RNA sequence: GGGAACGACUCGAGUAGAGUCGAAAAGCAUCAGUGGAUAAGCUCGGAGUGUACCACUCCAUGCUCCGGUUCCUGGCUAAGGGACAUCUGGGACUGGAUAUGCGAGGUGCUGAGCGACUUUAAGACCUGGCUGAAAGCCAAGCUCAUGCCACAACUGACCGUCGUAUGAUUUCGAUCAUACGACGGUAAAAGAAACAACAACAACAAC
Reactivity to 2A3 in 0.01 (KOAc 150mM, MgCl2 10mM, bicine 150mM(pH8.5), 24C), signal-to-noise 1, nucleotides 027 to 156: g070c040a060u170c120a000g010u020g030g000a130u080a200a070g000c030u060c060g120g000a150g040u110g040u150a130c130c030a100c020u000c010c000a000u050g010c030u000c010c010g010g000u030u060c020c020u020g030g000c040u110a160a220g140g020g050a030c030a040u060c020u000g050g000g000a000c030u020g020g000a030u020a000u140g130c050g030a060g020g050u060g000c030u020g000a000g010c010g040a040c010u090u240u050a130a000g060a040c030c030u020g020g050c030u100g170a160a050a000g000c000c030a000a030g010c010u010c050a000u210g040c020c000a030c040a020a140c110u100g050
The record gives the reactivity of an RNA of 207 nucleotides to 2A3. For 2A3 the reverse transcriptase was SuperScript II with manganese. For 2A3, 538 sequencing reads were counted.